[RMDB]
RNA sequence: GGGAACGACUCGAGUAGAGUCGAAAACUGACCAAGAGAGAAGGGAAAGCAUUUUGUUCUGACCAUAAUGACAUAAGGAGUUCAUUUCACACCAAACAUCUUUCCAGCAUGUUUCUCCCAUUGAGAACUGCAUUGUAGAGUUCGCUCUACAAUGCAGAAAAGAAACAACAACAACAAC
Reactivity to 2A3 in 0.01 (KOAc 150mM, MgCl2 10mM, bicine 150mM(pH8.5), 24C), signal-to-noise 1, nucleotides 027 to 126: c050u040g040a040c010c060a050a020g030a020g010a000g020a090a020g080g000g000a000a000a020g000c030a060u000u080u110u000g060u050u040c090u090g050a060c030c000a030u050a080a040u100g000a000c020a010u190a150a010g110g020a020g130u080u040c030a020u030u130u000c050a020c040a010c000c050a060a010a020c030a070u030c010u000u000u000c020c050a010g030c070a060u050g020u000u050u020c040u000c030c040c010a100u060u190g040a110g020a140a060
Reactivity to DMS in 0.01 (KOAc 150mM, MgCl2 10mM, bicine 150mM(pH8.5), 24C), signal-to-noise 2, nucleotides 027 to 126: c120u000g010a060c050c050a020a120g020a130g010a100g000a090a030g000g020g040a010a040a050g030c150a040u010u000u000u010g000u000u000c080u010g020a150c290c100a050u000a040a020u010g000a030c100a110u020a040a040g000g000a110g000u000u000c060a080u000u000u020c080a090c080a060c040c040a070a040a050c080a100u010c060u000u000u000c010c000a110g050c110a080u000g000u010u000u000c050u000c000c040c030a130u010u000g010a120g000a110a170